[RMDB]
RNA sequence: GGGAACGACUCGAGUAGAGUCGAAAAGGGACGCCUUUAGAAGAAGAGGCUAGGUGGUAUUCCGGUGUGGGAUACUUGGUAAUAUGUAACGCUAAUUGCAUAAGAUUGUAGGACGGAAUUUACAGCCAAAACGGUCCUGCGUUCGCGCAGGACCGAACUAUUUUGUCGACUUCGGUCGACAAAAUAGAAAAGAAACAACAACAACAAC
Reactivity to 2A3 in 0.01 (KOAc 150mM, MgCl2 10mM, bicine 150mM(pH8.5), 24C), signal-to-noise 2, nucleotides 027 to 156: g040g010g000a000c040g030c010c040u080u110u150a220g010a280a000g030a060a000g020a050g020g010c030u030a060g000g030u010g010g040u040a070u050u080c050c040g000g120u180g010u100g040g030g000a000u020a040c030u040u070g000g020u040a080a100u050a080u120g030u040a040a020c040g010c130u060a090a020u060u090g010c020a020u040a160a030g030a120u150u100g080u130a030g010g030a010c050g010g020a000a020u050u030u070a070c040a020g020c000c000a040a000a010a020c020g000g020u000c000c010u010g030c000g000u050u010c190g030c010g000c050a000g000g020a000c000c000g000a000a000